[RMDB]
RNA sequence: GGGAACGACUCGAGUAGAGUCGAAAAUAUAAUGCCAUCCAAGAGAUCUCUUGACAAACUCUUGGAACAACUCAACCAAACAACAUGAGAGAAAAGAUCUAAAAAAAAAUAGAGGAUCAAUCCAGGAGGUCCAACAUCUGAAAGAUGGGUGUAUGAAGAUGUAAACCUAUUUCGAUAGGUUUACAUCAAAAGAAACAACAACAACAAC
Reactivity to 2A3 in 0.01 (KOAc 150mM, MgCl2 10mM, bicine 150mM(pH8.5), 24C), signal-to-noise 1, nucleotides 027 to 156: u080a000u020a030a070u060g100c030c020a030u010c000c010a070a020g050a000g010a170u000c110u010c030u130u010g010a030c020a010a220a130c000u000c000u000u040g000g000a030a030c020a000a000c000u040c060a030a140c030c000a240a040a090c010a020a000c010a060u140g010a030g000a000g090a060a120a090a110g050a000u070c070u040a170a300a040a000a000a020a000a010a110u020a120g080a060g040g040a010u000c000a010a020u010c020c010a020g120g000a020g000g020u030c030c000a000a000c040a210u080c010u040g040a140a060a060g010a040u070g000g010g040u040g010u040a090u090g090a020a040

The data come from the RNA Mapping Database (RMDB), library OK3TST. The record gives the reactivity of an RNA of 207 nucleotides to 2A3. Values cover nucleotides 27 to 156. The 2A3 profile rests on 532 reads.